An RNA of 177 nucleotides, treated with DMS and 2A3 and read out base by base. For 2A3 the reverse transcriptase was SuperScript II with manganese.

RNA sequence: GGGAACGACUCGAGUAGAGUCGAAAAACAUGGGGCUUGCUUUCCUCCUCCUGCCCUGGGCCACCAGGCAGGCAGCUGUCAGCCCCAUCUGCCACACACCACUUUGGGAAUGGUACCCUGAGUGUCCGUUGGUUAAAAGGUUCGCCUUUUAACCAACAAAAGAAACAACAACAACAAC
Reactivity to DMS in 0.01 (KOAc 150mM, MgCl2 10mM, bicine 150mM(pH8.5), 24C), signal-to-noise 4, nucleotides 027 to 126: a140c120a040u000g010g000g010g030c010u000u000g060c090u010u000u000c030c020u000c140c020u000c000c010u000g020c140c030c030u000g000g010g010c210c300a110c000c000a010g000g020c030a010g010g020c220a020g000c130u000g010u000c200a040g000c020c010c000c000a010u010c050u000g010c000c020a120c220a100c140a110c230c000a020c040u000u000u000g010g000g010a140a150u010g020g010u010a110c010c000c000u000g010a030g000u000g000u010c120c160
Reactivity to 2A3 in 0.01 (KOAc 150mM, MgCl2 10mM, bicine 150mM(pH8.5), 24C), signal-to-noise 4, nucleotides 027 to 126: a010c030a010u020g000g000g010g000c020u080u100g020c020u070u150u070c010c020u010c020c000u010c000c000u020g050c100c010c000u010g020g020g000c090c050a210c040c000a060g010g000c010a000g020g010c010a020g010c020u060g090u170c030a010g010c000c010c010c020a000u010c000u030g010c000c010a090c010a030c010a030c110c000a010c010u020u030u030g020g000g090a110a140u250g270g000u150a180c000c010c000u010g010a010g020u010g050u080c040c070